RNA sequence: GGGAACGACUCGAGUAGAGUCGAAAAUCAAACGAUUUCGAUCGUUUGAAACGGACCACUCCUGCGGGAGUUAAGCCCAUACGGACAGCCGGGUCCACUGCCAGUCAUUCGGUUUCGACCGAAUGAACCAAACGGUUAGAUUCGUCUAACCGUUUGGAAAAGAAACAACAACAACAAC
Reactivity to 2A3 in 0.01 (KOAc 150mM, MgCl2 10mM, bicine 150mM(pH8.5), 24C), signal-to-noise 3, nucleotides 027 to 126: u010c000a000a000a000c010g010a000u030u060u210c230g110a020u010c000g010u000u000u010g010a030a000a010c060g000g010a010c000c010a060c030u010c000c010u060g010c260g080g000g000a010g000u030u070a030a000g020c000c000c010a030u090a100c050g010g070a140c020a030g130c050c030g150g000g000u000c000c000a000c000u040g000c020c030a060g080u030c000a010u000u010c010g020g000u040u040u110c190g090a020c010c000g000a010a000u000g010a010a020
Reactivity to DMS in 0.01 (KOAc 150mM, MgCl2 10mM, bicine 150mM(pH8.5), 24C), signal-to-noise 4, nucleotides 027 to 126: u000c000a000a000a010c000g000a020u000u000u010c190g020a010u000c000g010u000u000u000g010a010a100a090c120g010g000a020c020c030a300c000u000c000c000u000g040c210g030g010g000a030g000u000u000a060a090g010c000c000c010a160u000a100c100g000g000a090c080a030g010c040c070g000g010g000u010c000c010a210c030u000g000c060c040a120g000u000c000a010u000u000c000g010g000u000u000u010c180g000a020c000c010g010a010a000u000g000a010a150